[RMDB]
Chemical mapping of a 207-nucleotide RNA with DMS and 2A3. The DMS profile rests on 20,677 reads. High 2A3 reactivity points to a flexible backbone, as in loops and unpaired stretches.
RNA sequence: GGGAACGACUCGAGUAGAGUCGAAAAGGACUCCGUGAGGAGUCCGUGCAUCGAGAGAUGCACAAGGGCGAAGUGAGUCUCGGUGCCCCUCCUCUACGAUGUUGAGUAGAGGAGAGUUGUCGUCUCACGAUUUAUAGUGAGACUGACUUGAGACUAGAUGAUACAACUCAUUCGUGAGUUGUAUCAUAAAAGAAACAACAACAACAAC
Reactivity to DMS in 0.01 (KOAc 150mM, MgCl2 10mM, bicine 150mM(pH8.5), 24C), signal-to-noise 5, nucleotides 027 to 156: g030g010a010c010u000c010c020g020u000g010a220g030g010a030g020u000c000c000g000u000g020c010a010u000c000g030a300g000a300g010a010u000g020c000a010c000a060a090g030g010g020c040g010a120a150g010u000g000a050g000u000c000u000c010g010g000u000g000c040c010c010c000u000c000c000u000c000u000a000c000g000a180u010g010u000u010g010a300g000u010a020g010a030g000g000a000g000a020g000u000u000g020u000c020g010u000c000u000c000a020c000g000a170u000u010u000a130u010a160g020u000g000a040g000a040c010u020g030a020c000u000u000g030a070g010a070c010u000a160g020
Reactivity to 2A3 in 0.01 (KOAc 150mM, MgCl2 10mM, bicine 150mM(pH8.5), 24C), signal-to-noise 3, nucleotides 027 to 156: g000g010a000c000u000c000c000g020u030g030a030g000g000a000g000u000c000c000g000u000g000c000a000u000c000g030a020g000a010g000a050u000g050c000a010c010a020a040g010g000g000c020g040a030a010g080u050g090a020g000u010c000u000c010g000g040u070g000c010c000c000c000u000c000c000u000c000u000a000c000g070a050u100g030u140u030g050a010g000u000a000g000a000g010g000a000g000a000g000u020u080g020u000c000g000u000c000u000c010a000c000g000a000u020u250u060a170u110a030g000u000g000a000g000a020c040u030g000a000c000u000u080g010a000g000a000c000u010a010g020
Conditions: 150 mM KOAc, 10 mM MgCl2 and 150 mM bicine (pH 8.5), 24 C. Values cover nucleotides 27 to 156.